[RMDB]
Chemical mapping of a 207-nucleotide RNA with 2A3 and DMS.

RNA sequence: GGGAACGACUCGAGUAGAGUCGAAAAUCCUAAGUCCCAAGGGAGCGUAAGUGGUAGGCGAAGAACGUAUCGGAAACGAUACGGGAGCCUACCCUUACGCAUCGAUCUUGGGAUAUGGAAAAACUAUGUCGGACGUGUUCGCACGUCCGACAUAGAACAAGUACGAAUGAUUCGUCAUUCGUACUUGAAAAGAAACAACAACAACAAC
Reactivity to 2A3 in 0.01 (KOAc 150mM, MgCl2 10mM, bicine 150mM(pH8.5), 24C), signal-to-noise 3, nucleotides 027 to 156: u020c000c010u020a080a030g020u000c000c000c000a000a000g050g000g010a050g000c000g010u010a010a010g040u160g300g000u010a000g000g020c020g100a230a030g010a030a020c000g000u000a000u010c010g000g030a080a060a020c010g000a000u010a010c010g000g010g000a000g000c000c000u000a000c010c000c000u000u000a000c000g000c000a000u000c000g020a030u020c010u000u000g000g000g010a000u020a010u000g000g030a040a020a010a010a050c000u010a000u010g000u000c010g010g000a000c010g000u010g060u080u130c230g020c120a010c010g000u000c000c000g000a000c000a000u000a000g000a000a000
Reactivity to DMS in 0.01 (KOAc 150mM, MgCl2 10mM, bicine 150mM(pH8.5), 24C), signal-to-noise 2, nucleotides 027 to 156: u000c000c000u000a110a150g000u010c000c000c010a030a020g010g000g000a090g000c000g020u000a020a030g030u010g120g010u000a010g010g060c000g000a100a190g000a160a170c020g030u000a000u010c000g030g010a210a110a300c030g030a040u000a000c000g010g010g020a250g030c000c000u000a040c020c000c000u020u000a020c010g010c000a010u000c100g000a050u010c000u000u000g000g020g010a010u000a020u000g000g000a040a100a090a130a200c010u000a010u000g020u000c000g010g000a050c000g030u000g020u010u000c300g050c000a050c000g020u010c000c010g000a000c000a000u000a000g010a070a200